[RMDB]
RNA sequence: GGGAACGACUCGAGUAGAGUCGAAAAGCAGCACCUUGGUUACUGCCGGUUUUCCGUCGAUUAGGUACAUACGGCGAUUGUGCCGCGAGAGGAUGAUUGCGUCUUCGUUAAGAAGUUGCAAUCGCAAGGGUAAUUCAUACUUCGGUAUGAAUUGCCCAAAAGAAACAACAACAACAAC
Reactivity to 2A3 in 0.01 (KOAc 150mM, MgCl2 10mM, bicine 150mM(pH8.5), 24C), signal-to-noise 9, nucleotides 027 to 126: g030c030a000g020c030a050c030c020u100u140g090g000u110u110a060c020u050g020c020c000g040g020u040u030u060u050c030c010g030u050c020g050a130u080u210a070g040g030u080a040c020a070u130a060c040g040g010c030g080a150u060u140g040u090g020c000c010g030c050g030a100g010a030g130g060a110u180g000a000u050u000g000c000g010u010c000u000u000c000g060u120u220a180a040g000a000a000g010u080u120g000c000a000a000u000c010g000c020a030a110
Reactivity to DMS in 0.01 (KOAc 150mM, MgCl2 10mM, bicine 150mM(pH8.5), 24C), signal-to-noise 9, nucleotides 027 to 126: g000c020a030g010c300a050c040c070u020u020g010g010u010u010a100c040u010g010c010c020g000g000u010u010u000u010c020c010g010u020c060g000a130u020u030a070g010g010u010a040c100a070u020a150c060g010g010c050g000a130u020u020g010u010g010c010c010g010c070g000a120g000a120g010g000a100u030g000a010u000u000g010c010g000u000c000u000u000c000g000u020u060a140a160g000a010a020g010u000u010g000c000a000a000u000c000g010c150a100a120